[RMDB]
Conditions: 150 mM KOAc, 10 mM MgCl2 and 150 mM bicine (pH 8.5), 24 C.
This 177-nucleotide RNA was probed chemically with DMS and 2A3.
The 2A3 profile rests on 8,045 reads.
For 2A3 the reverse transcriptase was SuperScript II with manganese.
RNA sequence: GGGAACGACUCGAGUAGAGUCGAAAAGUGGCCCAGACCCCCUGUCCCUGGACCUUGGAAGCCGCUAAAGGAAGCAGCAAGACCAGGCCAGCUGGUGGCUGCCUGGACUGGAGUUUGGUCAGUGGUAGUUUUACGUAUAGUUCGCUAUACGUAAAACAAAAGAAACAACAACAACAAC
Reactivity to DMS in 0.01 (KOAc 150mM, MgCl2 10mM, bicine 150mM(pH8.5), 24C), signal-to-noise 9, nucleotides 027 to 126: g020u010g010g010c020c010c020a150g000a290c040c020c020c020c030u000g010u000c020c020c030u000g010g010a080c040c030u000u000g010g010a140a140g010c040c040g020c040u010a080a090a120g000g010a080a070g010c020a050g010c060a110a060g000a100c010c010a020g000g000c100c090a040g000c020u000g010g020u010g020g010c010u000g000c020c020u000g000g000a110c030u010g000g000a100g010u000u000u000g010g010u000c030a060g010u000g010g010u010a110
Reactivity to 2A3 in 0.01 (KOAc 150mM, MgCl2 10mM, bicine 150mM(pH8.5), 24C), signal-to-noise 4, nucleotides 027 to 126: g040u050g070g080c020c010c010a040g100a190c020c000c010c020c020u020g030u010c010c010c000u030g060g050a080c010c000u020u020g050g030a100a020g000c020c030g030c060u040a040a050a030g050g010a040a010g010c020a000g010c010a060a020g010a030c000c000a000g010g070c070c010a000g010c010u080g090g160u130g080g000c010u010g010c010c000u010g010g000a010c010u020g030g020a060g020u070u160u080g030g000u030c020a020g000u040g100g030u040a100